Source information:
Conditions: 150 mM KOAc, 10 mM MgCl2 and 150 mM bicine (pH 8.5), 24 C. Chemical mapping of a 207-nucleotide RNA with 2A3. Reactivities are given for positions 27 through 156. 2A3 adducts were read by reverse transcription with SuperScript II with manganese.
RNA sequence: GGGAACGACUCGAGUAGAGUCGAAAAGGGCUGCUGGGCUCCUAAAGUGGGGUGGACUGCGUGAGGCUGGUUUCACAGAGCAACGAAUAGCUCCCGCUCUGUGCAGUGGAAGGAUAACGAGCCAGUGUCAUAUAAGUUCAACGAAUGUCUGAUGGGCGUACAGUGUUGUCUUCGGACAACACUGUACAAAAGAAACAACAACAACAAC
Reactivity to 2A3 in 0.01 (KOAc 150mM, MgCl2 10mM, bicine 150mM(pH8.5), 24C), signal-to-noise 1, nucleotides 027 to 156: g040g010g000c020u000g000c000u040g040g020g000c020u010c020c020u180a220a070a070g050u090g010g000g010g000u080g020g020a000c020u020g000c030g060u030g050a010g030g000c070u010g030g010u000u290u060c000a000c010a000g010a010g000c010a030a050c050g190a150a030u050a140g010c010u070c020c040c000g000c010u010c000u010g030u040g030c030a020g020u170g050g070a110a030g000g070a060u030a160a060c020g000a010g000c000c000a020g010u060g090u000c020a000u110a000u010a090a100g040u060u110c030a060a000c040g010a100a050u080g010u010c020u020g010a050u030g040g010g020c050